[RMDB]
This 177-nucleotide RNA was probed chemically with 2A3 and DMS. For DMS the reverse transcriptase was MarathonRT. The data come from the RNA Mapping Database (RMDB), library OK1LIB. Values cover nucleotides 27 to 126. The DMS profile rests on 68,649 reads.
RNA sequence: GGGAACGACUCGAGUAGAGUCGAAAACGAUAUGCAUUGAUCGCAUGUAGACUAUUAAUGCGUACGAAUUAGUAUGCUCGUAGUCUGUAUUAGUGUCAUGAAAAUGACACUAAUGCGACGAGCAUAAGGUAGUGCUUGAUUUCGAUCGAGUACUACCAAAAGAAACAACAACAACAAC
Reactivity to 2A3 in 0.01 (KOAc 150mM, MgCl2 10mM, bicine 150mM(pH8.5), 24C), signal-to-noise 9, nucleotides 027 to 126: c020g040a150u010a000u020g010c030a020u000u010g010a020u020c020g010c020a020u140g110u180a030g030a070c000u000a000u020u010a020a010u010g000c000g000u000a010c000g010a010a020u070u010a040g000u000a000u000g000c000u000c010g010u020a060g100u000c100u080g000u000a010u000u010a000g000u000g000u000c000a000u020g040a030a030a020a010u010g000a000c000a000c000u000a000a000u010g000c000g000a010c000g000a000g000c000a010u010a040a030
Reactivity to DMS in 0.01 (KOAc 150mM, MgCl2 10mM, bicine 150mM(pH8.5), 24C), signal-to-noise 9, nucleotides 027 to 126: c050g000a150u010a000u000g000c000a030u010u000g000a030u000c040g010c030a180u040g040u040a070g010a090c010u000a010u000u000a030a010u010g000c000g020u000a010c000g010a120a110u040u040a100g000u010a000u000g000c000u010c070g000u000a060g000u010c050u020g020u010a050u000u000a000g010u000g000u000c000a000u000g000a100a060a130a010u000g000a000c000a000c000u000a010a000u000g000c000g000a020c010g000a010g000c000a010u000a020a070